[RMDB]
RNA sequence: GGGAACGACUCGAGUAGAGUCGAAAAGCGUGGUUAAUGCCAACAGUGGUGAUGGUGGUUCUGGCCAUUAUCUGGGAUCGCGCGGCAGGUCGUCAGGUGACCUCCAGCGCUCACUAAAUCACUGAACUAGAGCCGAACUAUUCGUAGUUCGGCUCUAAAAAGAAACAACAACAACAAC
Reactivity to DMS in 0.01 (KOAc 150mM, MgCl2 10mM, bicine 150mM(pH8.5), 24C), signal-to-noise 1, nucleotides 027 to 126: g000c100g010u000g010g050u000u000a090a100u000g000c030c090a060a300c020a030g000u010g070g030u010g000a060u000g000g010u000g000g000u000u000c280u010g020g000c030c060a010u040u000a010u000c010u000g000g000g010a040u000c090g000c010g020c030g000g010c160a030g010g010u010c000g010u000c260a070g000g000u000g000a010c030c020u000c020c000a100g020c010g010c020u000c100a030c070u000a070a110a070u010c030a010c030u000g010a080a060c080
Reactivity to 2A3 in 0.01 (KOAc 150mM, MgCl2 10mM, bicine 150mM(pH8.5), 24C), signal-to-noise 1, nucleotides 027 to 126: g060c030g000u030g010g040u130u170a160a040u260g070c020c030a040a000c010a020g000u000g060g040u020g010a020u100g030g030u000g010g020u110u130c090u160g160g050c000c000a060u030u040a030u050c010u010g000g050g060a050u110c050g000c000g010c000g000g020c070a000g020g000u040c040g120u090c050a040g040g200u120g180a000c000c000u030c000c000a050g040c020g000c020u040c010a060c020u070a000a000a000u000c010a010c020u020g010a030a020c030
An RNA of 177 nucleotides, treated with DMS and 2A3 and read out base by base. The reactions ran in a buffer of 150 mM KOAc, 10 mM MgCl2 and 150 mM bicine (pH 8.5), at 24 C. 2A3 adducts were read by reverse transcription with SuperScript II with manganese. The 2A3 profile rests on 1,154 reads. The DMS profile rests on 853 reads.